Overview:
This 177-nucleotide RNA was probed chemically with DMS and 2A3. Conditions: 150 mM KOAc, 10 mM MgCl2 and 150 mM bicine (pH 8.5), 24 C. Values cover nucleotides 27 to 126. Source: RMDB library OK2TRN, as collected in RNAgym.
RNA sequence: GGGAACGACUCGAGUAGAGUCGAAAAAUCGUCGAAGUGCUGGGCGACAAUAUGGGCACCGGCAUGGCGGUUGAUAUCGCUCUGCGUACCCAUGAAAUUCCGUACAUCUGGCCGCAGGCUGUUGAGAUAGUCGGUAUAUAUUCGUAUAUACCGACUAAAAAGAAACAACAACAACAAC
Reactivity to DMS in 0.01 (KOAc 150mM, MgCl2 10mM, bicine 150mM(pH8.5), 24C), signal-to-noise 9, nucleotides 027 to 126: a040u000c030g020u000c020g020a120a150g020u000g020c020u000g010g010g010c030g010a110c090a110a140u010a090u010g010g000g010c020a080c060c100g010g010c050a020u000g000g010c010g010g010u000u000g010a100u010a060u000c080g010c030u010c070u000g010c020g020u000a100c160c010c020a040u010g000a040a070a150u000u000c080c060g010u010a120c130a090u000c040u010g000g010c110c020g000c080a060g010g000c030u000g000u000u000g010a110g020a170
Reactivity to 2A3 in 0.01 (KOAc 150mM, MgCl2 10mM, bicine 150mM(pH8.5), 24C), signal-to-noise 7, nucleotides 027 to 126: a000u020c010g030u010c040g080a190a030g060u020g040c010u020g020g020g030c040g090a150c060a070a110u260a130u280g060g030g020c100a100c240c010g040g000c010a020u080g010g000c000g020g000u000u080g050a030u050a030u130c050g000c020u060c010u080g000c000g030u060a090c020c000c020a010u100g050a030a050a020u180u060c070c040g010u060a060c020a090u010c020u030g020g010c020c020g010c040a030g040g010c020u050g040u120u140g050a110g020a080